[RMDB]
RNA sequence: GGGAACGACUCGAGUAGAGUCGAAAACAGAAGCGGACGUGGCUCUUCAAGCCGGCGCGACCGGAGCGCGAUCGUUUACUCGGCGAAGACGUGGCAGAAAAGCUCGCCAGCGAGUUGGCGCGGCUACUACAGGACUAUCGUUCGCGAUAGUCCUGUAAAAAGAAACAACAACAACAAC
Reactivity to 2A3 in 0.01 (KOAc 150mM, MgCl2 10mM, bicine 150mM(pH8.5), 24C), signal-to-noise 1, nucleotides 027 to 126: c020a030g140a170a010g020c010g040g010a050c040g040u100g050g060c020u030c000u180u140c050a030a020g000c010c050g090g020c020g030c030g100a010c020c050g050g040a060g010c000g000c030g040a050u030c000g030u000u040u000a080c030u000c050g000g080c050g020a020a020g050a030c050g010u040g080g000c050a040g060a100a100a040a020g080c000u020c040g050c010c000a030g020c040g190a080g050u080u050g020g000c000g000c000g000g050c020u030a050c010
Reactivity to DMS in 0.01 (KOAc 150mM, MgCl2 10mM, bicine 150mM(pH8.5), 24C), signal-to-noise 2, nucleotides 027 to 126: c100a130g000a110a050g010c030g020g040a080c060g010u000g010g000c030u000c040u000u010c120a120a110g020c030c040g010g010c070g020c040g030a060c050c050g020g020a160g010c080g000c020g000a070u000c030g030u000u000u010a090c070u010c060g000g020c020g010a070a050g000a080c060g010u000g000g010c070a110g000a090a080a090a080g020c010u010c040g010c010c020a020g020c080g010a080g000u010u010g000g000c010g000c090g000g000c030u010a070c110
Structure probing data (2A3 and DMS) for a 177-nucleotide construct. Conditions: 150 mM KOAc, 10 mM MgCl2 and 150 mM bicine (pH 8.5), 24 C. The data come from the RNA Mapping Database (RMDB), library OK2TRN. The DMS profile rests on 1,801 reads.